Notes:
An RNA of 177 nucleotides, treated with 2A3 and DMS and read out base by base. The RNA was probed in 150 mM KOAc, 10 mM MgCl2 and 150 mM bicine (pH 8.5) at 24 C. For 2A3, 5,007 sequencing reads were counted. 2A3 adducts were read by reverse transcription with SuperScript II with manganese. The DMS profile rests on 6,742 reads. DMS adducts were read by reverse transcription with MarathonRT. It was measured as part of the RMDB library OK1LIB.
RNA sequence: GGGAACGACUCGAGUAGAGUCGAAAACAAGGGCUACGUCACACAACAACAUCAGGGCAUCAUCGCCCACACCAGCCUAAAUGACCCUGAAGUUUGAUGGGACUGAAGUGGGUGGUUUAAUUGGGACAAUCGUACUGACUUUCGAGUCAGUACGAUUAAAAGAAACAACAACAACAAC
Reactivity to 2A3 in 0.01 (KOAc 150mM, MgCl2 10mM, bicine 150mM(pH8.5), 24C), signal-to-noise 6, nucleotides 027 to 126: c050a020a100g070g030g000c010u070a000c040g050u030c000a000c020a010c020a090a120c060a040a030c020a090u100c060a070g000g030g000c000a020u040c020a040u090c090g020c000c000c000a000c020a010c010c000a010g000c000c010u040a090a110a050u130g040a130c000c000c050u050g070a090a050g060u040u110u120g120a150u070g000g000g100a100c000u020g030a160a010g040u030g000g020g000u020g020g040u030u070u120a140a160u130u120g060g030g020a020c050
Reactivity to DMS in 0.01 (KOAc 150mM, MgCl2 10mM, bicine 150mM(pH8.5), 24C), signal-to-noise 4, nucleotides 027 to 126: c100a070a080g010g000g000c030u000a080c110g010u020c020a030c080a110c120a060a110c170a030a050c060a080u020c060a060g000g000g000c090a120u020c100a050u020c110g000c010c010c000a030c060a060c170c060a030g000c020c020u000a040a100a150u010g000a100c000c020c020u020g000a050a110g020u000u010u020g010a270u010g000g020g000a060c010u000g000a120a100g020u000g010g000g010u000g000g000u020u040u010a050a120u020u020g000g000g000a130c190